[RMDB]
RNA sequence: GGGAACGACUCGAGUAGAGUCGAAAAGGACCUGCCGAUCGGGAUCAACAUCACGCGGUUCCAGACGCUGCUGGCCCUGCACCGGAGUUACCUGACGCCGGGUGACUCCAGUAGUGGGUGGACUGCGCACUUAGAUCACCUUCGGGUGAUCUAAGUGAAAAGAAACAACAACAACAAC
Reactivity to 2A3 in 0.01 (KOAc 150mM, MgCl2 10mM, bicine 150mM(pH8.5), 24C), signal-to-noise 2, nucleotides 027 to 126: g040g010a050c000c000u000g020c010c000g020a030u040c020g010g050g020a030u100c050a060a120c020a120u170c080a000c050g000c010g000g020u240u100c010c000a070g040a170c010g010c020u020g000c000u010g020g000c020c030c050u050g000c060a020c010c010g010g020a020g030u040u030a140c030c050u170g120a070c060g050c050c000g000g000g080u040g000a040c030u020c010c000a010g000u020a010g020u000g030g040g210u020g000g040a010c010u000g020c020g010
Reactivity to DMS in 0.01 (KOAc 150mM, MgCl2 10mM, bicine 150mM(pH8.5), 24C), signal-to-noise 2, nucleotides 027 to 126: g000g010a060c040c010u010g010c000c010g000a070u000c070g020g020g020a180u010c060a080a080c210a100u020c110a230c060g010c000g000g010u000u000c020c030a030g000a090c060g000c010u000g010c020u000g000g000c170c060c030u000g000c080a080c010c020g010g010a040g010u000u000a080c080c050u010g020a080c130g010c130c040g020g000g000u010g000a080c080u000c000c040a000g000u000a030g060u000g000g000g030u010g000g000a070c040u000g000c000g020

Chemical mapping of a 177-nucleotide RNA with 2A3 and DMS. The DMS profile rests on 1,860 reads. Conditions: 150 mM KOAc, 10 mM MgCl2 and 150 mM bicine (pH 8.5), 24 C. For 2A3, 2,579 sequencing reads were counted. The data come from the RNA Mapping Database (RMDB), library OK2TST. DMS adducts were read by reverse transcription with MarathonRT. Values cover nucleotides 27 to 126.